[RMDB]
RNA sequence: GGGAACGACUCGAGUAGAGUCGAAAAUAACCCCUAUACUUGUAUAGGCGAUUAAUAAAUCUUCUGUAAGUGCUGUAAGAGGAUUACCCCUUGAGGUUUCAGCACUAGGCUGCUCUAGCGAUUAAUCACAACGAUUUGGUCUUCGGACCAAAUCGAACAAAAUUACUGUGUUCGCACAGUAAUUUUGAAAAGAAACAACAACAACAAC
Reactivity to DMS in 0.01 (KOAc 150mM, MgCl2 10mM, bicine 150mM(pH8.5), 24C), signal-to-noise 2, nucleotides 027 to 156: u000a080a130c040c030c000c020u000a020u000a010c040u010u000g020u000a020u000a030g020g050c040g020a080u010u000a070a120u010a050a040a060u000c010u000u000c020u000g010u000a100a130g030u000g030c040u000g020u000a110a100g010a020g010g020a130u000u000a080c100c030c010c050u010u000g000a120g040g010u010u000u000c020a020g010c000a020c010u000a100g020g030c000u000g020c030u000c110u000a160g000c020g000a170u010u000a010a110u000c040a120c040a090a280c000g010a010u000u010u000g020g010u000c000u000u000c300g050g000a020c010c000a000a000a010u000c010g000a030a130
Reactivity to 2A3 in 0.01 (KOAc 150mM, MgCl2 10mM, bicine 150mM(pH8.5), 24C), signal-to-noise 2, nucleotides 027 to 156: u050a040a060c010c000c000c010u020a010u030a120c070u170u240g070u070a060u050a050g020g020c030g050a040u040u060a060a080u070a120a180a090u050c030u120u030c020u090g170u130a140a030g000u020g010c000u000g030u070a100a050g020a020g080g050a050u080u150a090c030c030c020c020u040u030g060a110g200g000u070u130u100c010a000g000c000a000c000u000a030g100g000c020u020g030c030u080c050u160a030g020c010g060a020u050u110a070a050u080c030a040c050a230a070c050g000a000u000u000u000g000g010u000c000u030u050c200g090g000a000c000c000a000a000a000u000c000g000a010a000

Chemical mapping of a 207-nucleotide RNA with DMS and 2A3. For 2A3 the reverse transcriptase was SuperScript II with manganese. Values cover nucleotides 27 to 156. For 2A3, 1,584 sequencing reads were counted.